[RMDB]
RNA sequence: GGGAACGACUCGAGUAGAGUCGAAAACGAUCUGCGUCACGCUAGAUGCGUACUACUAGAUCAUGGACAUGUGAUCCAUGUCAUGACUAGGUACCAUGACAUGACGGAUCAGCUAGCUGACCAUGCGGUCCGCAGCCUUGUUCGCAAGGCUGCGGACAAAAGAAACAACAACAACAAC
Reactivity to DMS in 0.01 (KOAc 150mM, MgCl2 10mM, bicine 150mM(pH8.5), 24C), signal-to-noise 2, nucleotides 027 to 126: c070g000a040u020c090u000g050c270g000u000c000a000c130g030c040u010a040g000a070u000g000c300g010u000a030c060u010a190c040u000a000g000a210u000c000a000u000g020g010a010c030a040u000g010u050g010a190u020c170c000a000u000g010u000c020a020u000g000a030c000u000a010g020g000u000a010c000c020a060u000g000a130c090a070u000g000a070c070g030g030a050u020c000a120g020c070u010a110g010c080u000g040a070c000c030a070u000g020c080g040
Reactivity to 2A3 in 0.01 (KOAc 150mM, MgCl2 10mM, bicine 150mM(pH8.5), 24C), signal-to-noise 2, nucleotides 027 to 126: c020g040a060u030c020u120g060c060g000u010c000a000c100g000c010u040a060g020a140u090g010c050g020u010a020c010u040a060c000u000a020g110a300u030c010a010u020g150g070a070c000a020u000g060u120g020a060u000c030c000a000u010g010u000c000a000u000g010a010c000u010a000g010g040u000a000c000c000a040u020g080a030c020a030u090g080a060c060g090g010a130u020c000a010g020c000u030a020g030c000u000g000a030c050c010a060u160g030c170g070